Description
This 177-nucleotide RNA was probed chemically with 2A3 and DMS. The DMS profile rests on 1,615 reads. DMS adducts were read by reverse transcription with MarathonRT. 2A3 adducts were read by reverse transcription with SuperScript II with manganese. The RNA was probed in 150 mM KOAc, 10 mM MgCl2 and 150 mM bicine (pH 8.5) at 24 C. For 2A3, 962 sequencing reads were counted. The data come from the RNA Mapping Database (RMDB), library OK2TRN.
RNA sequence: GGGAACGACUCGAGUAGAGUCGAAAAAUCGGCGGCCCGCAACCCGGCCCGCAGCUCACCCACGAAGUCGGCGUACCCAGGGGUGUCGACGAGGUUGACCUUGAUGCCGUCGUAAGCCAGCGAGGCGAGGUUCUACUGUAUUCGUACAGUAGAACCUAAAAGAAACAACAACAACAAC
Reactivity to 2A3 in 0.01 (KOAc 150mM, MgCl2 10mM, bicine 150mM(pH8.5), 24C), signal-to-noise 1, nucleotides 027 to 126: a000u040c010g000g010c000g000g000c050c140c050g150c040a020a030c000c020c020g160g060c000c080c030g000c030a040g000c020u000c040a020c000c000c010a090c060g010a080a010g050u100c080g010g110c060g150u090a080c050c020c120a120g000g090g090g000u000g030u030c020g020a100c040g000a070g000g000u050u040g100a080c000c000u050u190g060a040u100g020c000c030g000u090c000g000u050a060a000g030c000c010a100g090c050g130a100g000g030c020g010
Reactivity to DMS in 0.01 (KOAc 150mM, MgCl2 10mM, bicine 150mM(pH8.5), 24C), signal-to-noise 2, nucleotides 027 to 126: a110u000c010g040g020c020g000g000c040c110c120g000c130a090a080c070c110c020g040g050c060c080c050g030c100a060g000c120u000c040a110c010c000c020a180c090g020a100a130g020u000c020g010g010c070g030u000a120c040c010c080a150g030g010g000g010u000g000u010c020g000a050c030g030a090g010g000u000u010g000a090c050c060u000u030g010a130u000g000c000c000g000u020c010g010u000a050a100g010c010c010a130g040c070g000a120g010g020c040g020